The record gives the reactivity of an RNA of 177 nucleotides to DMS and 2A3.
It was measured as part of the RMDB library OK2TRN.
The RNA was probed in 150 mM KOAc, 10 mM MgCl2 and 150 mM bicine (pH 8.5) at 24 C.
For 2A3 the reverse transcriptase was SuperScript II with manganese.
For 2A3, 1,042 sequencing reads were counted.
For DMS the reverse transcriptase was MarathonRT.
Reactivities are rounded to 0.1 and cut off at 0 and 3.
RNA sequence: GGGAACGACUCGAGUAGAGUCGAAAAAUAUGCUUGCAUUACAGAAUAAUAUUCACAGGUAUUAUUAAAAUGAGUAUCGGAGCUACAUUACCAUAUCAUCAUCCAUGCUCAUGUGGAUGGAAAAUCCAUAGCCUACACAAUUCGUUGUGUAGGCUAUAAAAGAAACAACAACAACAAC
Reactivity to DMS in 0.01 (KOAc 150mM, MgCl2 10mM, bicine 150mM(pH8.5), 24C), signal-to-noise 2, nucleotides 027 to 126: a060u000a080u000g010c020u010u000g000c000a100u000u000a120c080a140g000a040a070u000a010a020u000a180u000u010c120a100c200a140g000g000u000a010u000u000a020u000u020a040a040a050a050u000g010a080g010u000a010u010c090g030g000a050g030c050u000a070c120a060u000u010a140c020c000a080u000a080u000c130a070u000c020a050u010c010c000a010u000g010c160u020c140a030u030g020u000g010g010a020u000g000g010a060a040a090a060u010c100c110
Reactivity to 2A3 in 0.01 (KOAc 150mM, MgCl2 10mM, bicine 150mM(pH8.5), 24C), signal-to-noise 2, nucleotides 027 to 126: a000u110a040u120g000c000u030u000g120c000a090u050u130a050c040a070g110a110a060u070a030a010u020a020u070u120c050a050c000a210g160g000u000a010u050u020a010u040u050a080a130a030a070u090g030a000g060u040a060u200c090g090g000a010g000c010u060a020c040a090u040u090a080c010c010a030u070a060u270c070a020u020c000a000u030c000c000a020u020g030c010u070c150a050u230g010u000g030g000a020u000g020g110a040a080a000a020u090c010c010